[RMDB]
Annotation:
An RNA of 207 nucleotides, treated with 2A3 and read out base by base. Reactivities are rounded to 0.1 and cut off at 0 and 3. Source: RMDB library OK3TST, as collected in RNAgym. The RNA was probed in 150 mM KOAc, 10 mM MgCl2 and 150 mM bicine (pH 8.5) at 24 C.

RNA sequence: GGGAACGACUCGAGUAGAGUCGAAAAUAGAAAGGCACUUGAGUCUCUGCUGCCAAGAUGACAUCUCAAAUAAAACAGGACAGGUGGAAAUGGCUGUGUUAGGUGCUGGGGGAUAAGGAGGAAGACAUGCAUUGAGUCUUUUACUAGAGAGACCAAAGCUCCGUAUUACGUUCGCGUAAUACGGAGCAAAAGAAACAACAACAACAAC
Reactivity to 2A3 in 0.01 (KOAc 150mM, MgCl2 10mM, bicine 150mM(pH8.5), 24C), signal-to-noise 1, nucleotides 027 to 156: u120a020g060a050a080a020g050g000c010a000c050u030u080g050a050g060u010c070u000c020u120g010c030u040g030c020c020a050a000g100a100u090g060a020c000a030u010c040u010c070a010a070a030u140a050a100a030a010c040a000g000g050a010c030a010g070g000u020g030g040a020a080a040u060g040g010c040u030g040u010g000u170u180a050g010g030u030g080c050u070g000g020g000g000g030a020u040a180a080g050g000a000g000g000a050a000g040a060c020a010u120g060c000a000u030u110g020a020g010u010c020u010u110u000u000a120c060u020a020g050a010g000a000g030a090c030c000a000a000a130